The record gives the reactivity of an RNA of 177 nucleotides to 2A3 and DMS. Source: RMDB library RFM100, as collected in RNAgym.

RNA sequence: GGGAACGACUCGAGUAGAGUCGAAAACGCGUUAUUGAGCCCCGAAAAAUUCAUAUUGCAUGAGGCUUUCACUUUCGUGAUAGUGGGAGCGGUCGUAUACGCACGCCAGGCGAGUGCGAAUACCUCGAUCCCGGCAAUCAUUCGUGAUUGCCGGGAUAAAAGAAACAACAACAACAAC
Reactivity to 2A3 in 0.01 (KOAc 150mM, MgCl2 10mM, bicine 150mM(pH8.5), 24C), signal-to-noise 2, nucleotides 027 to 126: c000g010c000g010u000u010a130u120u300g050a040g060c000c000c000c000g180a010a060a120a000a090u150u060c100a100u120a050u030u300g070c100a060u050g030a010g000g100c000u010u000u020c000a000c000u060u160u120c160g090u130g130a130u040a030g000u000g000g000g000a050g030c020g000g000u030c040g010u020a010u000a030c030g010c000a020c020g050c000c030a030g170g000c040g020a050g010u010g000c000g000a000a030u070a070c000c050u060c020g010
Reactivity to DMS in 0.01 (KOAc 150mM, MgCl2 10mM, bicine 150mM(pH8.5), 24C), signal-to-noise 1, nucleotides 027 to 126: c100g000c050g000u000u020a050u020u020g000a140g010c000c000c030c020g020a040a080a110a060a140u050u020c070a030u000a050u000u010g050c190a040u000g000a050g030g000c030u000u010u000c010a000c000u000u000u030c110g000u010g020a070u000a050g050u000g030g000g010a030g030c000g010g040u000c120g030u000a010u000a080c050g060c000a030c010g040c010c000a130g000g000c080g020a140g000u000g020c030g000a060a000u000a000c000c120u020c050g000